Source: RMDB library RNAMAK, as collected in RNAgym. Structure probing data (2A3) for a 207-nucleotide construct. Conditions: 150 mM KOAc, 10 mM MgCl2 and 150 mM bicine (pH 8.5), 24 C. Reactivities are given for positions 27 through 156.
RNA sequence: GGGAACGACUCGAGUAGAGUCGAAAAACUGAUCUUCGGAUCAGUAAAAAGCGUACUACGUCUAGGAGAGGUGUACCGCUCUAGUCCCAAAUAGGACUAGAUGUACACUACCCACCUCCUACAUGACGUAUCGCAAAAAUCAAGCUUCGGCUUGAAAUCAAUUGUCGCAGUUCGCUGCGACAAUUGAAAAAGAAACAACAACAACAAC
Reactivity to 2A3 in 0.01 (KOAc 150mM, MgCl2 10mM, bicine 150mM(pH8.5), 24C), signal-to-noise 1, nucleotides 027 to 156: a010c010u000g000a010u000c030u060u100c300g220g000a010u020c010a000g010u080a000a060a000a050a000g060c060g000u050a000c070u010a000c000g000u040c030u050a000g010g030a070g010a050g000g000u020g000u000a000c010c000g010c000u000c000u000a000g000u000c000c000c010a200a300a060u250a050g000g000a000c000u000a000g000a000u170g010u000a010c000a000c000u030a030c000c000c030a010c010c000u000c000c000u020a040c070a200u120g000a000c000g000u000a000u270c000g000c000a000a090a090a000a040u010c000a010a000g020c000u040u270c290g150g010c010u030u070g000a020a000a030